[RMDB]
RNA sequence: GGGAACGACUCGAGUAGAGUCGAAAACGUUCGCUGUGACUGCGAUGCUCAUAUGCACGAUUUCGUGCAUCGGCUUACAUGCUGGGUAUGGGAUGGUCCUCCACGGUGAGCCGAGCGUGUAUGUGCCGGACUCCAUGCCAUUCGUGGCAUGGAGUCCAAAAGAAACAACAACAACAAC
Reactivity to 2A3 in 0.01 (KOAc 150mM, MgCl2 10mM, bicine 150mM(pH8.5), 24C), signal-to-noise 3, nucleotides 027 to 126: c040g040u070u030c030g000c050u030g070u180g140a070c050u100g020c060g020a050u030g030c000u010c060a020u060a030u140g000c030a010c120g140a270u020u250u300c060g030u070g030c000a100u000c000g000g000c000u000u010a000c010a110u140g010c120u010g210g040g010u140a100u200g130g000g080a070u300g100g160u220c000c000u010c020c000a040c070g120g000u020g000a000g000c000c010g010a000g000c030g000u020g010u010a010u080g050u050g020c030c060
This 177-nucleotide RNA was probed chemically with 2A3.
Conditions: 150 mM KOAc, 10 mM MgCl2 and 150 mM bicine (pH 8.5), 24 C.
Values cover nucleotides 27 to 126.
For 2A3, 881 sequencing reads were counted.
The data come from the RNA Mapping Database (RMDB), library OK1LIB.
2A3 adducts were read by reverse transcription with SuperScript II with manganese.